[RMDB]
The record gives the reactivity of an RNA of 170 nucleotides to DMS and 2A3. The reactions ran in a buffer of 150 mM KOAc, 10 mM MgCl2 and 150 mM bicine (pH 8.5), at 24 C. The DMS profile rests on 2,344 reads.
RNA sequence: GGGAACGACUCGAGUAGAGUCGAAAAACUCAAUCCGUUGACAUGUUAGCUGUCAAAACAGGCGUUGCUAUUGAACAGCUGCUUUAUGCGAUCCAACAACUGUAUACUGGGUUCCAGGGAAAGCAAAUACCACCGGCCUUCGGGCCGGUGAAAAGAAACAACAACAACAAC
Reactivity to DMS in 0.01 (KOAc 150mM, MgCl2 10mM, bicine 150mM(pH8.5), 24C), signal-to-noise 4, nucleotides 027 to 129: a060c090u060c130a070a120u010c130c080g030u060u000g000a180c290a230u020g000u140u000a050g070c080u030g030u000c000a050a000a000a060c080a090g000g000c270g030u000u050g020c110u040a220u130u000g030a100a000c060a050g010c110u030g000c080u000u010u010a070u030g070c080g060a180u030c000c030a060a100c120a060a070c190u030g030u000a060u020a060c030u000g000g000g040u000u100c250c080a090g020g020g020a010a060a030g000c110a080a040a020u000a130c220
Reactivity to 2A3 in 0.01 (KOAc 150mM, MgCl2 10mM, bicine 150mM(pH8.5), 24C), signal-to-noise 2, nucleotides 027 to 129: a010c050u220c000a000a080u110c080c090g000u000u090g000a020c020a180u120g080u070u130a080g000c000u000g000u030c000a000a000a000a250c060a050g110g000c130g140u020u300g050c070u110a090u000u080g010a110a000c000a030g000c000u010g000c080u010u020u020a020u120g000c040g040a060u000c050c000a000a000c000a130a070c150u050g000u160a070u160a140c000u000g080g010g080u110u000c000c030a020g170g000g000a000a020a000g090c000a020a020a020u100a030c100